[RMDB]
RNA sequence: GGGAACGACUCGAGUAGAGUCGAAAACAGUGAUGGAAACAUCACUGAAAAACGUGCUAGCGCUGCACGAAAAAGUCGAUCGAAUACCGAUCGACAAGCGCUAAAGUCAUGCCGAAAGGCAUGACAACCUAGCGAGUAGGUUCGCCUACUCGCUAGGAAAAGAAACAACAACAACAAC
Reactivity to DMS in 0.01 (KOAc 150mM, MgCl2 10mM, bicine 150mM(pH8.5), 24C), signal-to-noise 3, nucleotides 027 to 126: c030a000g000u000g000a020u020g000g000a140a130a170c000a010u000c000a000c000u000g010a030a080a040a160a150c020g000u000g000c000u010a020g000c020g000c000u000g000c020a000c020g000a040a060a110a030a030g010u000c000g000a000u000c000g000a270a120u050a190c260c020g000a020u000c010g000a000c000a000a020g020c000g000c000u010a090a040a040g030u000c000a000u000g000c000c000g000a080a060a150g000g020c000a000u000g000a000c010a020a030
Reactivity to 2A3 in 0.01 (KOAc 150mM, MgCl2 10mM, bicine 150mM(pH8.5), 24C), signal-to-noise 5, nucleotides 027 to 126: c010a000g000u000g000a000u010g000g040a040a040a030c000a000u000c000a000c000u000g010a050a000a000a000a000c000g000u000g000c030u050a010g000c010g010c000u010g010c000a000c040g120a210a020a010a020a000g010u000c000g000a000u000c000g010a050a040u130a300c120c010g000a000u000c000g000a000c000a000a000g000c000g000c000u000a020a000a000g000u000c000a000u000g000c000c000g030a110a020a020g000g000c000a000u000g000a010c000a000a010

The record gives the reactivity of an RNA of 177 nucleotides to DMS and 2A3. Source: RMDB library OK1LIB, as collected in RNAgym. The 2A3 profile rests on 9,681 reads. The reactions ran in a buffer of 150 mM KOAc, 10 mM MgCl2 and 150 mM bicine (pH 8.5), at 24 C.